[RMDB]
RNA sequence: GGGAACGACUCGAGUAGAGUCGAAAAGAUAUGGAAUCUGGGAGCUGAUGACCAUAUGGAGGUUCGGAAACGAGCGAAGUAUGCAAGGCUUAGGAUUCCUAAGUCAAAAGAGCGCUUCGGCGCUCAACAUACUUAUUAUGUUCGCAUAAUAAGUAUGAAAAGAAACAACAACAACAAC
Reactivity to 2A3 in 0.01 (KOAc 150mM, MgCl2 10mM, bicine 150mM(pH8.5), 24C), signal-to-noise 8, nucleotides 027 to 126: g010a000u040a030u100g000g010a010a000u010c030u050g290g300g090a010g000c010u030g020a300u070g020a120c020c020a000u010a010u030g070g040a200g300g080u050u020c010g010g020a070a050a040c000g000a000g010c020g010a090a020g030u020a010u020g000c030a090a200g000g000c000u010u020a020g010g000a020u020u000c000c000u000a030a010g010u000c000a030a040a080a180g000a000g000c010g000c020u060u100c300g130g000c000g000c000u020c000a000a000
Reactivity to DMS in 0.01 (KOAc 150mM, MgCl2 10mM, bicine 150mM(pH8.5), 24C), signal-to-noise 9, nucleotides 027 to 126: g010a030u000a220u010g000g000a070a010u000c010u000g010g010g010a010g010c010u000g010a070u020g000a120c300c000a010u000a000u000g010g010a230g020g010u000u000c010g010g000a030a040a080c020g010a010g010c010g000a220a110g000u000a010u000g000c020a050a050g000g000c000u000u000a300g000g010a040u000u000c000c000u000a020a060g000u000c020a090a050a090a150g000a010g000c000g020c000u000u010c210g020g000c000g010c000u000c000a020a100